[RMDB]
RNA sequence: GGGAACGACUCGAGUAGAGUCGAAAAUUCCGGCAAUCUGGAGGCGUUCUGGACAGGGGUUCGAUUCCCCUCACCUCCACCCAAGGGCAUUCCGCUGAGUGUUUUUGGAUGGGGGUGUACUGGUCUCCCAUGCUAAGACGUUCGCGUCUUAGCAUGGAAAAGAAACAACAACAACAAC
Reactivity to 2A3 in 0.01 (KOAc 150mM, MgCl2 10mM, bicine 150mM(pH8.5), 24C), signal-to-noise 2, nucleotides 027 to 126: u120u040c050c000g030g000c030a010a050u070c050u040g110g000a020g010g000c010g000u020u030c020u090g040g090a030c010a010g000g000g010g000u000u080c010g020a010u050u060c000c000c000c000u000c000a000c000c000u000c000c020a000c000c010c000a000a000g030g000g000c000a010u020u010c030c080g110c300u300g000a010g000u010g020u010u010u000u020u000g010g010a020u010g010g000g000g010g000u000g000u010a000c010u070g010g060u000c020u020c010
Reactivity to DMS in 0.01 (KOAc 150mM, MgCl2 10mM, bicine 150mM(pH8.5), 24C), signal-to-noise 4, nucleotides 027 to 126: u030u010c030c010g000g020c090a070a100u020c030u010g020g010a010g020g030c010g010u000u010c010u000g000g020a090c180a040g000g000g000g000u040u010c030g000a300u000u000c000c000c000c020u000c020a000c000c010u010c000c000a010c030c000c000a020a020g010g000g010c000a000u000u000c000c200g030c190u050g000a010g040u010g000u000u000u010u000u000g000g000a030u000g000g000g000g000g000u010g000u000a010c210u000g010g010u010c040u000c050